Structure probing data (2A3 and DMS) for a 177-nucleotide construct.

RNA sequence: GGGAACGACUCGAGUAGAGUCGAAAACUAUACAAUGACUUGCGGUGGCUAGCUGAUGGGUCGAGUCAGUCCUUUUGUCCUCCCAAACAAGUCUGAUACCAAUUUAUCGACCCCAGAGGGAUGAAGGCACGCAUUAUAAUUUCGAUUAUAAUGCGUGAAAAGAAACAACAACAACAAC
Reactivity to 2A3 in 0.01 (KOAc 150mM, MgCl2 10mM, bicine 150mM(pH8.5), 24C), signal-to-noise 9, nucleotides 027 to 126: c020u050a030u110a260c130a140a130u190g050a060c030u050u060g030c030g090g030u060g010g030c020u030a040g000c010u030g010a090u110g020g040g010u030c020g020a010g010u010c000a010g050u070c000c030u060u090u060u080g030u000c010c020u030c010c010c010a020a080a030c020a040a020g020u000c040u030g020a010u030a110c040c030a070a030u080u150u070a080u110c010g020a030c000c000c010c030a050g040a100g070g030g010a040u120g080a060a060g060g000
Reactivity to DMS in 0.01 (KOAc 150mM, MgCl2 10mM, bicine 150mM(pH8.5), 24C), signal-to-noise 7, nucleotides 027 to 126: c090u020a110u030a110c230a090a070u030g010a090c060u010u020g000c050g000g010u010g010g010c120u010a060g000c020u000g010a070u030g010g000g000u000c010g020a050g020u000c030a040g000u010c070c080u010u020u020u020g000u010c040c030u000c020c010c000a070a110a120c090a030a040g010u010c020u010g000a060u030a120c180c140a070a100u030u020u010a080u000c010g000a030c010c000c010c050a060g000a080g010g000g010a070u030g000a090a050g000g010